[RMDB]
RNA sequence: GGGAACGACUCGAGUAGAGUCGAAAACUCCGCCCACGUGACCCAGCCAAUCGGCCUCAAGAGCAGGAGGAUUGUGGGAGGUGGAGAGAAGCUUGUGUGGGAGAGAGAGGCUUGGGGAAAGCCGGUGCCCCUAGACUGAUUUCGAUCAGUCUAGGGGAAAAGAAACAACAACAACAAC
Reactivity to DMS in 0.01 (KOAc 150mM, MgCl2 10mM, bicine 150mM(pH8.5), 24C), signal-to-noise 2, nucleotides 027 to 126: c060u000c010c030g010c000c000c040a080c110g020u010g000a160c010c010c010a120g010c110c030a060a120u000c060g020g020c000c030u000c060a150a120g010a120g020c080a070g020g000a070g000g000a040u010u000g040u010g020g020g020a130g000g030u010g000g020a060g000a070g020a110a090g010c040u010u000g000u010g000u010g000g010g010a080g010a100g010a090g020a150g000g020c050u000u000g000g000g010g010a120a050a070g010c020c020g000g000u000g040
Reactivity to 2A3 in 0.01 (KOAc 150mM, MgCl2 10mM, bicine 150mM(pH8.5), 24C), signal-to-noise 1, nucleotides 027 to 126: c010u000c010c010g000c000c000c010a080c090g070u040g100a080c000c010c000a020g050c030c000a030a020u060c110g270g000c050c020u050c020a170a110g090a040g200c100a020g040g050a010g080g020a080u050u130g030u100g000g060g060a070g030g050u070g040g010a080g010a020g020a080a030g070c110u100u140g010u020g010u100g180g000g000a140g000a000g000a000g000a060g020g060c020u080u000g010g050g050g060a100a010a000g020c040c000g000g020u020g000

Structure probing data (DMS and 2A3) for a 177-nucleotide construct. The data come from the RNA Mapping Database (RMDB), library OK2TRN. For DMS the reverse transcriptase was MarathonRT. For DMS, 1,837 sequencing reads were counted.